[RMDB]
This 207-nucleotide RNA was probed chemically with 2A3 and DMS.
RNA sequence: GGGAACGACUCGAGUAGAGUCGAAAAAAUGCCGCCUCAGUUCCAAGCUCUUUCGUGGCACUGUAAACAGUCCUAUUGAGUUAGGGGCAGUCAACCACGUUGCGAAUCUAAAUUAUCUGGUCGAGAGUUACGAUUCCCUACUUCGGUAGGGAAUCAAGAGCGUAAAUUAGUUCGCUAAUUUACGCUCAAAAGAAACAACAACAACAAC
Reactivity to 2A3 in 0.01 (KOAc 150mM, MgCl2 10mM, bicine 150mM(pH8.5), 24C), signal-to-noise 3, nucleotides 027 to 156: a000a030u100g040c020c020g030c020c000u070c040a040g000u120u000c020c010a050a050g000c020u020c030u040u110u060c050g040u040g020g020c110a000c020u000g080u110a050a140a090c050a060g070u040c000c010u030a050u060u070g080a130g160u090u060a040g010g020g020g000c000a000g030u000c010a010a040c000c020a030c030g010u040u060g060c050g020a020a060u050c020u130a040a050a160u140u050a060u070c080u070g010g020u090c090g040a030g000a020g150u090u050a070c060g000a000u000u010c000c000c000u000a000c000u030u030c060g040g000u000a000g010g000g000a000a000u000c000a000a000
Reactivity to DMS in 0.01 (KOAc 150mM, MgCl2 10mM, bicine 150mM(pH8.5), 24C), signal-to-noise 1, nucleotides 027 to 156: a050a040u000g010c010c030g010c020c000u010c030a120g000u010u000c020c020a100a250g000c100u000c030u010u000u000c010g040u000g030g040c040a030c030u020g000u000a080a070a040c060a110g020u000c020c000u000a060u000u000g020a240g020u000u000a040g020g000g000g000c010a030g000u000c020a020a030c020c010a030c050g020u000u010g010c030g030a030a070u000c030u000a050a060a080u000u010a080u000c040u010g020g000u010c020g000a120g000a080g040u000u010a060c140g000a020u000u000c010c000c010u010a000c000u000u020c300g040g040u000a010g010g000g020a000a000u000c000a050a190
For 2A3, 1,707 sequencing reads were counted. The data come from the RNA Mapping Database (RMDB), library M2RFPK.